RNA sequence: GGGAACGACUCGAGUAGAGUCGAAAACUUUACACCUUCUAUGGUAAGGAGUCACUUGAGAACCCAACCUACAUUUACCACUCCGCAUUCAUUGAGUGUGGAAGUUGUGGUAAUGAUUCCUGGCUUAAUCGGAAGCGGUUCGCCGCUUCCAAAAGAAACAACAACAACAAC
Reactivity to DMS in 0.01 (KOAc 150mM, MgCl2 10mM, bicine 150mM(pH8.5), 24C), signal-to-noise 5, nucleotides 027 to 129: c050u050u030u020a120c180a090c040c020u080u040c110u080a110u060g000g000u050a010a050g070g010a040g020u020c070a100c100u020u060g050a110g030a100a120c000c000c000a060a080c120c030u040a120c080a080u030u020u030a000c010c040a020c020u040c010c000g020c020a020u000u020c050a160u000u090g050a010g040u000g000u000g050g030a130a080g040u070u110g040u030g000g000u020a040a000u010g010a210u040u070c040c040u020g040g060c060u050u090a000a000u080c180
Reactivity to 2A3 in 0.01 (KOAc 150mM, MgCl2 10mM, bicine 150mM(pH8.5), 24C), signal-to-noise 6, nucleotides 027 to 129: c010u070u070u090a080c060a010c010c000u080u070c070u140a130u220g040g000u050a040a050g040g000a010g010u030c050a030c100u050u060g060a030g040a180a030c000c020c000a010a020c010c000u070a060c020a030u040u070u040a000c000c000a000c000u020c000c000g000c000a000u000u000c040a090u060u300g010a000g010u010g000u000g010g000a030a020g100u110u150g000u000g020g000u000a000a000u030g040a000u080u020c040c060u010g030g000c020u100u160a050a020u130c060
An RNA of 170 nucleotides, treated with DMS and 2A3 and read out base by base. Source: RMDB library 15KLIB, as collected in RNAgym. The reactions ran in a buffer of 150 mM KOAc, 10 mM MgCl2 and 150 mM bicine (pH 8.5), at 24 C. 2A3 adducts were read by reverse transcription with SuperScript II with manganese.